An RNA of 177 nucleotides, treated with 2A3 and DMS and read out base by base.
The reactions ran in a buffer of 150 mM KOAc, 10 mM MgCl2 and 150 mM bicine (pH 8.5), at 24 C.
For DMS, 16,824 sequencing reads were counted.

RNA sequence: GGGAACGACUCGAGUAGAGUCGAAAAGGAUGAAGCCGAGCAAUGCCGCGAAGUUUUGCUGCUCAAUGAAGGGAAGUUGCUUUAUAGCGGUGCGCCGCAGGAACUUACACAGCGUAUGCGUGGCCGACCACAUGUAACUUUUCGAAGUUACAUGUGGAAAAGAAACAACAACAACAAC
Reactivity to 2A3 in 0.01 (KOAc 150mM, MgCl2 10mM, bicine 150mM(pH8.5), 24C), signal-to-noise 9, nucleotides 027 to 126: g080g020a030u100g060a060a000g030c030c020g020a010g010c020a060a100u110g000c010c010g020c030g040a070a020g020u020u030u130u140g010c010u010g010c000u010c040a050a170u210g070a100a070g040g010g020a020a040g040u080u060g040c010u070u090u090a210u110a120g010c010g000g020u030g020c080g010c000c010g000c010a010g030g030a020a020c010u030u070a040c080a010c020a050g020c010g030u110a070u110g010c020g030u030g030g000c010c010g030a030
Reactivity to DMS in 0.01 (KOAc 150mM, MgCl2 10mM, bicine 150mM(pH8.5), 24C), signal-to-noise 9, nucleotides 027 to 126: g020g010a080u000g000a130a090g010c030c040g010a090g010c070a070a080u000g020c020c040g020c060g010a070a070g010u000u000u000u000g010c020u000g000c030u000c070a090a080u010g010a110a100g000g010g010a060a060g010u000u000g000c020u000u000u010a110u010a140g020c020g010g020u000g020c140g020c020c020g010c030a060g010g010a040a050c070u010u010a090c140a080c060a070g000c030g020u010a060u010g010c020g020u000g000g010c020c060g010a240